[RMDB]
RNA sequence: GGGAACGACUCGAGUAGAGUCGAAAAGCACGGAGACAUGCACGGAAACGUUGACGGAGGCUCCAUGUCGAACGUGGCUGUCCGAGGCCUCCGUAUUUGACUGGUAAUUCAGUCGUUAGGACAGCUAGGUCAGGCUAUCAUUCGUGAUAGCCUGACCAAAAGAAACAACAACAACAAC
Reactivity to DMS in 0.01 (KOAc 150mM, MgCl2 10mM, bicine 150mM(pH8.5), 24C), signal-to-noise 1, nucleotides 027 to 126: g020c100a070c030g000g050a210g000a060c010a020u010g030c300a030c120g000g000a130a130a170c060g040u010u000g020a030c040g000g010a030g000g020c000u000c090c000a020u000g010u000c010g000a120a110c140g010u000g020g040c000u000g000u010c000c010g020a110g000g000c020c000u000c000c010g000u000a000u030u030u020g000a010c000u010g000g000u000a090a140u000u000c000a010g000u000c030g030u000u010a170g010g020a060c000a000g040c010u010a070
Reactivity to 2A3 in 0.01 (KOAc 150mM, MgCl2 10mM, bicine 150mM(pH8.5), 24C), signal-to-noise 1, nucleotides 027 to 126: g110c040a010c020g070g020a090g000a040c010a010u060g030c030a060c070g000g060a060a090a030c080g170u200u190g120a000c000g040g000a000g000g000c000u060c010c040a000u030g020u040c040g060a230a140c050g070u040g040g000c000u020g010u040c000c000g000a060g000g100c000c010u030c020c010g000u040a120u070u030u120g030a000c000u000g000g070u120a140a090u240u090c030a000g010u000c040g010u080u070a040g000g000a000c000a010g090c000u000a010